[RMDB]
RNA sequence: GGGAACGACUCGAGUAGAGUCGAAAAAGAUGGAUCCGUAUCCAGAGCUUCUAUGUUGACUAGGAUCCCCGGGAUCCGGCCUCAAGAGAUGUGUACCAUCCAUCGGUAGACAGCAAGAGAAGUAUAGCCCUAUAUAGGACUUCGGUCCUAUAUAGGGAAAAGAAACAACAACAACAAC
Reactivity to 2A3 in 0.01 (KOAc 150mM, MgCl2 10mM, bicine 150mM(pH8.5), 24C), signal-to-noise 3, nucleotides 027 to 126: a000g100a070u070g000g000a030u010c100c100g010u070a010u000c030c040a050g010a060g110c030u060u000c030u040a120u100g050u070u050g100a140c030u070a190g010g010a000u000c000c000c040c060g210g060g000a020u030c030c010g010g020c010c010u030c040a040a040g050a010g010a120u030g040u020g020u090a050c020c010a020u030c010c010a050u040c020g000g000u010a040g010a090c030a000g050c030a150a070g060a030g000a120a000g010u030a060u180a210g060
Reactivity to DMS in 0.01 (KOAc 150mM, MgCl2 10mM, bicine 150mM(pH8.5), 24C), signal-to-noise 5, nucleotides 027 to 126: a120g010a040u000g000g000a020u000c110c110g000u000a040u010c100c040a110g010a140g010c070u000u000c030u000a100u010g010u000u010g010a060c050u000a070g050g010a030u010c020c020c190c230g020g010g010a030u000c010c010g010g000c060c050u000c090a050a060g020a100g000a060u000g010u000g000u010a040c040c050a070u000c040c050a030u000c030g000g000u000a050g020a060c050a060g010c080a060a130g020a070g010a070a100g010u000a080u010a130g010

The record gives the reactivity of an RNA of 177 nucleotides to 2A3 and DMS. Conditions: 150 mM KOAc, 10 mM MgCl2 and 150 mM bicine (pH 8.5), 24 C. For 2A3 the reverse transcriptase was SuperScript II with manganese. It was measured as part of the RMDB library OK2TRN. The DMS profile rests on 4,354 reads.